[RMDB]
RNA sequence: GGGAACGACUCGAGUAGAGUCGAAAACGCAACAUGAAGGUACGAUGCUUUUGUGUCGUGCUUCUUGUUUCUGGCACGUUGUGUCUUCACGCAGACAGAAGCUACCCAGGUAAUUCUGUUCCCGUAAUUUUCUUCUCAAAUUCGUUUGAGAAGAAAAAAAAGAAACAACAACAACAAC
Reactivity to 2A3 in 0.01 (KOAc 150mM, MgCl2 10mM, bicine 150mM(pH8.5), 24C), signal-to-noise 6, nucleotides 027 to 126: c060g020c030a020a030c000a020u040g060a080a000g090g010u030a000c010g010a020u020g020c020u130u200u260u300g030u010g000u010c000g000u000g000c000u000u000c000u000u030g010u010u020u020c050u040g030g000c030a020c120g150u110u170g030u020g010u020c000u060u110c080a070c060g020c030a020g020a060c010a020g060a060a000g010c010u020a040c010c010c010a020g030g050u060a060a080u090u030c040u060g000u030u010c000c000c000g010u040a060a120
Reactivity to DMS in 0.01 (KOAc 150mM, MgCl2 10mM, bicine 150mM(pH8.5), 24C), signal-to-noise 7, nucleotides 027 to 126: c130g000c130a050a020c020a020u000g010a080a030g010g010u010a010c010g000a020u000g000c010u010u020u020u030g030u000g020u000c000g020u000g000c010u000u000c010u000u000g010u000u010u010c050u020g000g000c080a070c090g000u020u010g030u000g010u000c040u000u000c110a100c120g010c100a120g000a070c050a040g000a090a080g000c060u010a070c080c010c060a090g010g010u010a060a090u000u010c060u000g010u000u000c010c120c010g010u040a060a070
The record gives the reactivity of an RNA of 177 nucleotides to 2A3 and DMS. It was measured as part of the RMDB libraries RFM100 and RFMREP. The RNA was probed in 150 mM KOAc, 10 mM MgCl2 and 150 mM bicine (pH 8.5) at 24 C.